[RMDB]
RNA sequence: GGGAACGACUCGAGUAGAGUCGAAAACGCGGUGAUCGACGCUAUCGUCCAGGCGCUCACCGGCACCUUGAACAUCGGCCACACGAUCGAAGACCUGAUCUUCUCGCUGACCAACAUCCGCCCCGGCGCGAUCGGAGGUGUGCUCGGUGGUGGGUCGUAAAGUGCUUUCAUUCGUGAAAGCACUUUAAAAAGAAACAACAACAACAAC
Reactivity to DMS in 0.01 (KOAc 150mM, MgCl2 10mM, bicine 150mM(pH8.5), 24C), signal-to-noise 2, nucleotides 027 to 156: c070g010c030g020g030u010g040a120u010c000g010a090c040g040c050u000a080u000c100g020u000c050c070a170g020g020c000g000c000u000c030a050c080c050g020g030c030a090c050c020u000u070g020a070a060c070a080u000c020g000g000c000c010a100c100a000c080g010a050u000c060g000a100a060g000a080c030c080u020g010a120u000c000u000u000c020u000c020g040c060u000g000a080c020c000a050a130c070a120u010c070c000g040c000c000c020c010g040g000c020g000c070g000a060u000c030g020g000a120g020g040u000g020u010g010c000u000c050g010g010u010g000g020u000g020g000g030u000c040g000
Reactivity to 2A3 in 0.01 (KOAc 150mM, MgCl2 10mM, bicine 150mM(pH8.5), 24C), signal-to-noise 3, nucleotides 027 to 156: c090g030c030g000g000u020g020a040u090c150g100a110c050g030c060u090a070u130c100g090u040c050c050a060g000g000c010g000c010u040c020a030c030c000g000g010c020a030c010c020u020u140g090a040a040c020a110u070c020g040g000c030c010a050c000a010c020g080a050u070c020g000a050a050g030a110c010c060u130g060a220u050c020u070u000c030u020c030g040c040u050g040a120c030c000a080a070c040a090u090c000c030g030c000c000c000c010g020g000c050g000c030g080a090u090c080g060g000a020g060g050u030g020u020g010c040u040c090g000g010u070g000g000u010g000g000g020u000c020g010

This 207-nucleotide RNA was probed chemically with DMS and 2A3. The 2A3 profile rests on 1,942 reads. The data come from the RNA Mapping Database (RMDB), library OK3TST. The reactions ran in a buffer of 150 mM KOAc, 10 mM MgCl2 and 150 mM bicine (pH 8.5), at 24 C.